[RMDB]
RNA sequence: GGGAACGACUCGAGUAGAGUCGAAAACGAACUGGGUGUAUGUGGUGGUGGUGAUUGUGGCUGGAGUGCCCUCCCUCACCAUCCCUGGCUAUGCCAUCUACAAGCUCAUCAGGAACCACUGCCAGAACGAUCGCUGAUAGUUCGCUAUCAGCGAUCGAAAAGAAACAACAACAACAAC
Reactivity to DMS in 0.01 (KOAc 150mM, MgCl2 10mM, bicine 150mM(pH8.5), 24C), signal-to-noise 1, nucleotides 027 to 126: c060g030a140a120c040u010g000g010g040u010g000u000a080u000g020u000g000g030u000g110g000u010g020g010u000g030a100u010u010g010u000g010g020c010u000g010g000a060g000u000g000c020c000c050u000c010c010c030u010c070a060c080c020a040u000c000c040c040u000g030g000c060u000a160u040g000c010c020a010u000c040u000a020c010a060a090g000c160u000c030a040u000c030a060g010g050a190a090c010c010a010c000u000g010c000c030a030g000a080a150
Reactivity to 2A3 in 0.01 (KOAc 150mM, MgCl2 10mM, bicine 150mM(pH8.5), 24C), signal-to-noise 1, nucleotides 027 to 126: c010g050a050a000c040u120g020g060g000u070g050u090a120u230g020u070g020g030u030g000g150u000g000g000u050g020a060u090u080g040u090g040g000c030u000g060g080a050g000u100g040c010c030c000u050c010c000c010u020c010a060c060c030a070u010c030c010c000u010g010g000c000u100a020u170g000c000c000a020u000c020u050a040c020a100a050g020c010u000c040a040u030c010a080g050g080a000a010c000c000a040c040u030g040c010c030a020g000a070a070